This 177-nucleotide RNA was probed chemically with DMS. The RNA was probed in 150 mM KOAc, 10 mM MgCl2 and 150 mM bicine (pH 8.5) at 24 C. DMS adducts were read by reverse transcription with MarathonRT. The DMS profile rests on 870 reads. The data come from the RNA Mapping Database (RMDB), library TTRDES.
[RMDB]
RNA sequence: GGGAACGACUCGAGUAGAGUCGAAAAAAAAAAGAUAUGGAGACUCCAGGCGACGAAGUGAAGGAACUCGAAAGUCGGAAACGACUUUCGUUGCCUUCACAGAGCCUGUGUCUCCUAAGUCAAAAAAGGUUCCAUAUUAGUUCGCUAAUAUGGAACCAAAAGAAACAACAACAACAAC
Reactivity to DMS in 0.01 (KOAc 150mM, MgCl2 10mM, bicine 150mM(pH8.5), 24C), signal-to-noise 1, nucleotides 027 to 126: a000a000a090a070a070a230g000a000u010a030u030g000g000a010g010a020c000u030c300c020a020g000g000c000g000a120c260g020a020a110g000u010g000a020a000g000g020a050a120c160u010c010g000a010a000a000g000u000c000g020g000a030a020a030c020g000a000c000u010u000u000c000g000u010u000g040c010c000u000u000c000a010c000a000g000a040g010c030c000u000g020u000g000u000c000u000c000c000u010a000a030g000u040c010a010a060a140a070a090a110